[RMDB]
RNA sequence: GGGAACGACUCGAGUAGAGUCGAAAAAGCGCUUUUUCGUGGAGGCCACACGCCCACUUGCAAUGGCCAUUAUGUUUUUGGGCUAUAAAGUGCAGCUCUGACAAAAGCGUUUGCUUAAAGCUGAAAGCAAACUUUUGAGUUUCGACUCAAAAGUUUGAAAAGAAACAACAACAACAAC
Reactivity to DMS in 0.01 (KOAc 150mM, MgCl2 10mM, bicine 150mM(pH8.5), 24C), signal-to-noise 6, nucleotides 027 to 126: a040g010c020g000c010u000u000u000u000u010c120g030u030g010g000a060g020g010c100c030a090c060a070c110g020c010c010c000a030c050u010u000g000c020a070a090u010g010g010c070c090a070u010u020a110u010g010u000u000u000u010u010g000g020g020c010u010a280u010a040a060a110g010u000g010c070a110g020c000u000c010u010g010a080c160a040a020a030a020g010c020g010u000u010u010g000c060u010u020a060a070a090g020c060u000g000a090a070a110g000
Reactivity to 2A3 in 0.01 (KOAc 150mM, MgCl2 10mM, bicine 150mM(pH8.5), 24C), signal-to-noise 8, nucleotides 027 to 126: a000g020c010g010c010u030u030u010u060u110c060g070u120g020g080a020g040g100c040c000a020c000a020c030g010c000c000c000a010c000u000u030g020c010a010a160u080g120g050c030c020a050u170u170a140u070g020u000u000u010u040u010g010g010g000c010u020a020u070a270a180a020g010u030g010c030a050g050c010u000c030u070g070a030c050a020a020a010a010g000c000g020u030u050u080g040c020u070u180a120a040a050g030c030u050g120a110a020a010g050